Source information
Conditions: 150 mM KOAc, 10 mM MgCl2 and 150 mM bicine (pH 8.5), 24 C. Structure probing data (2A3 and DMS) for a 207-nucleotide construct.
RNA sequence: GGGAACGACUCGAGUAGAGUCGAAAAGAUUAAGUGGGAGCGUCGCCCUGUCGGUGCAUCGGAUAUUAAUUAGCCAGUGCGUGGCAGUACGCAUAUUGAUGUCUACUUUGGCGUAGACUGUGCCAAUUUAAGGAUUGGUGGGCAAUCCAGCCCUAGAAUGGUGAGUAUAUUUCGAUAUACUCACCAUAAAAGAAACAACAACAACAAC
Reactivity to 2A3 in 0.01 (KOAc 150mM, MgCl2 10mM, bicine 150mM(pH8.5), 24C), signal-to-noise 6, nucleotides 027 to 156: g070a030u180u220a090a060g050u090g020g030g010a070g010c040g020u060c030g050c030c010c040u050g050u060c030g040g030u050g010c030a050u050c080g040g000a010u020a030u120u110a140a090u110u100a030g020c010c020a020g010u000g010c020g020u030g030g020c050a030g050u110a020c020g000c040a000u040a100u120u160g110a110u130g020u000c010u020a020c020u090u120u170g100g010c060g000u000a020g010a010c030u020g030u050g010c010c010a020a020u020u060u060a130a060g100g010a030u000u020g000g000u010g000g000g010c000a010a020u050c050c030a030g010c000c020c000u040a050g170a190
Reactivity to DMS in 0.01 (KOAc 150mM, MgCl2 10mM, bicine 150mM(pH8.5), 24C), signal-to-noise 4, nucleotides 027 to 156: g000a110u010u000a070a120g030u000g010g020g010a090g010c080g010u000c040g010c030c020c020u000g020u000c040g010g030u010g010c030a060u000c040g010g020a050u000a060u000u000a060a170u020u000a080g010c000c020a070g020u000g010c020g040u000g030g020c020a090g000u000a050c050g020c030a110u000a100u000u000g010a080u000g020u000c010u000a050c010u000u000u020g020g020c140g030u000a040g010a030c020u010g010u000g040c020c010a020a050u000u000u000a100a150g030g010a100u000u000g000g020u000g000g020g030c010a070a110u000c070c070a160g010c000c000c010u000a080g010a100
Notes:
For 2A3 the reverse transcriptase was SuperScript II with manganese. The 2A3 profile rests on 4,495 reads.